An RNA of 177 nucleotides, treated with DMS and 2A3 and read out base by base. Reactivities are given for positions 27 through 126. For DMS, 13,997 sequencing reads were counted. The RNA was probed in 150 mM KOAc, 10 mM MgCl2 and 150 mM bicine (pH 8.5) at 24 C. The 2A3 profile rests on 4,107 reads.
[RMDB]
RNA sequence: GGGAACGACUCGAGUAGAGUCGAAAAGACGGAAAAGAUCGAACCUAAGAAGAUCAGGGAGUGUUAGCCGAAUCCUAGGGCUCCUAGGGACGCAUCGUCAGAUGCGAAAUAAACACUAACGUCGAAAAUAUUACUAGCACUUCGGUGCUAGUAAUAUAAAAGAAACAACAACAACAAC
Reactivity to DMS in 0.01 (KOAc 150mM, MgCl2 10mM, bicine 150mM(pH8.5), 24C), signal-to-noise 7, nucleotides 027 to 126: g010a030c010g000g000a090a060a100a160g000a010u000c010g010a110a150c140c090u020a110a140g000a130a160g000a040u000c020a100g000g020g010a030g010u000g000u000u010a040g010c150c130g010a110a090u030c030c000u000a020g010g010g020c140u040c020c010u000a010g000g000g020a190c010g010c000a000u000c000g020u060c270a080g000a020u000g010c000g000a030a050a090u020a080a010a030c030a020c040u000a060a100c020g010u000c000g020a090a070a080
Reactivity to 2A3 in 0.01 (KOAc 150mM, MgCl2 10mM, bicine 150mM(pH8.5), 24C), signal-to-noise 5, nucleotides 027 to 126: g020a010c040g040g080a040a060a020a060g030a010u010c010g030a080a140c050c050u080a100a080g100a050a020g010a100u010c010a030g040g110g020a050g010u040g070u110u060a080g100c150c060g060a050a040u050c010c000u010a020g050g050g100c070u120c030c010u020a020g020g010g010a010c010g000c000a000u000c010g190u200c150a040g000a000u000g000c020g010a010a010a000u140a010a020a000c010a010c020u050a090a040c000g020u010c020g040a130a000a050